RNA sequence: GGGAACGACUCGAGUAGAGUCGAAAAGGGGUCGUUAUGGAUUCGACAGGUAUGGGUCGAGCCAUGACUGCAUUUCGUAGGUUACGGCUACGUAAAAACGUUCAGUUUAUUAUAACUGCAAAAAAUAAUAACAAUUCUUACGCUUUAGCUGCCUAAUUCAGACUCUCAUGUUCGCAUGAGAGUCUGAAAAAGAAACAACAACAACAAC
Reactivity to 2A3 in 0.01 (KOAc 150mM, MgCl2 10mM, bicine 150mM(pH8.5), 24C), signal-to-noise 2, nucleotides 027 to 156: g020g000g000g000u040c010g000u000u030a000u000g040g060a220u060u000c000g000a000c080a060g140g100u250a110u300g190g000g000u000c000g000a000g000c000c000a000u000g000a000c040u050g040c090a130u050u200u180c010g010u020a000g000g000u020u020a010c030g000g000c030u000a020c000g230u090a020a000a000a000a000c020g010u010u000c000a020g000u000u000u050a090u060u070a110u080a040a000c000u040g020c020a000a090a060a040a090a020u210a070a010u150a110a000c000a070a170u050u050c050u090u100a080c060g000c020u140u140u030a020g000c020u010g010c020c000u030a040a040u000